[RMDB]
RNA sequence: GGGAACGACUCGAGUAGAGUCGAAAAUACAAGUACGAAAGUACAAGCCUUAUCAGUUGGGCCUUCUGGUCAAAUUAGCGCACACCCAGGAGGUCCUUCGCAUGAGGUCGACAAGCGCUAAAAGAAAUGAUGAGUUCUUGUUCGCAAGAACUCAUCAAAAAGAAACAACAACAACAAC
Reactivity to DMS in 0.01 (KOAc 150mM, MgCl2 10mM, bicine 150mM(pH8.5), 24C), signal-to-noise 2, nucleotides 027 to 126: u000a100c200a140a220g000u000a010c020g000a080a110a300g000u010a000c000a090a130g000c030c000u000u000a020u000c160a110g000u010u010g030g000g010c010c000u000u010c000u000g030g000u000c170a070a020a100u000u000a000g010c000g020c010a060c230a090c300c000c030a010g000g000a000g000g010u000c000c000u010u000c040g030c250a040u020g000a000g010g000u020c040g040a080c100a070a090g020c010g000c040u000a020a030a090a150g010a060a030a060